Chemical mapping of a 177-nucleotide RNA with 2A3 and DMS.

RNA sequence: GGGAACGACUCGAGUAGAGUCGAAAACGCUAUGCAGCUCUACCGCUCUAUUCCUCGACUAGUUCUUGGAAUAUCGGGGAGUUCCAUACUUCCUAGUAAAGUUUCGGUGACGGCCAGGGUAGUAGCACUAACACUUCGAGUUCGCUCGAAGUGUUAGAAAAGAAACAACAACAACAAC
Reactivity to 2A3 in 0.01 (KOAc 150mM, MgCl2 10mM, bicine 150mM(pH8.5), 24C), signal-to-noise 2, nucleotides 027 to 126: c020g000c020u020a030u070g020c030a010g000c000u010c000u150a300c020c010g000c010u000c000u020a020u010u000c000c010u030c000g050a010c020u070a070g070u210u030c010u040u000g020g000a030a050u040a120u300c020g000g010g010g000a000g020u020u080c040c000a010u010a010c010u050u030c020c000u020a050g050u160a050a170a090g030u030u030u110c070g000g000u080g020a020c010g070g000c000c000a040g010g000g000u030a060g020u010a000g000c000a000
Reactivity to DMS in 0.01 (KOAc 150mM, MgCl2 10mM, bicine 150mM(pH8.5), 24C), signal-to-noise 2, nucleotides 027 to 126: c240g010c160u000a060u010g020c280a020g010c000u000c000u000a130c030c020g000c040u010c020u000a020u010u000c010c000u000c050g010a030c020u000a170g010u030u000c000u000u000g000g000a050a010u000a010u000c010g000g010g000g000a030g030u000u000c280c020a020u000a040c030u010u000c000c010u000a120g010u030a030a110a110g000u000u010u000c040g020g000u010g010a060c070g020g010c040c030a050g000g010g020u000a030g000u000a040g020c120a290

For DMS, 1,678 sequencing reads were counted.